This 177-nucleotide RNA was probed chemically with DMS and 2A3. The data come from the RNA Mapping Database (RMDB), library TTRDEL. The reactions ran in a buffer of 150 mM KOAc, 10 mM MgCl2 and 150 mM bicine (pH 8.5), at 24 C.

[RMDB]
RNA sequence: GGGAACGACUCGAGUAGAGUCGAAAAGAUAUGGACGAUGGAUGCAGAGAGGCUACUCGGAAACGAGUAGCUACCCACCUCUGAACUACAUCUAAGUCCUAAGUCAAAACCGGGCUUCGGCCCGGAACUAAGAACAAUCGUUCGCGAUUGUUCUUAGAAAAGAAACAACAACAACAAC
Reactivity to DMS in 0.01 (KOAc 150mM, MgCl2 10mM, bicine 150mM(pH8.5), 24C), signal-to-noise 3, nucleotides 027 to 126: g010a050u000a220u010g010g000a010c010g020a210u020g010g000a020u010g000c010a000g000a020g010a090g020g010c000u000a000c000u010c010g000g000a090a120a200c000g010a000g000u000a000g000c000u000a020c010c040c080a300c110c000u010c030u000g000a050a040c060u010a280c020a000u010c000u010a160a300g000u010c000c000u010a060a060g000u000c080a100a080a120a100c010c000g000g020g010c000u000u020c300g030g000c000c000c000g010g020a000a050
Reactivity to 2A3 in 0.01 (KOAc 150mM, MgCl2 10mM, bicine 150mM(pH8.5), 24C), signal-to-noise 2, nucleotides 027 to 126: g050a040u190a080u260g020g010a010c000g030a070u300g060g010a000u010g050c010a000g000a000g020a000g020g000c000u000a000c010u010c010g010g000a070a050a010c010g000a000g000u010a000g000c010u010a020c010c000c010a060c000c000u030c000u010g040a070a070c050u160a040c130a010u000c020u090a050a060g000u000c000c000u010a090a010g080u050c060a000a000a180a300c000c000g000g000g020c010u140u110c240g170g000c010c000c000g000g010a000a000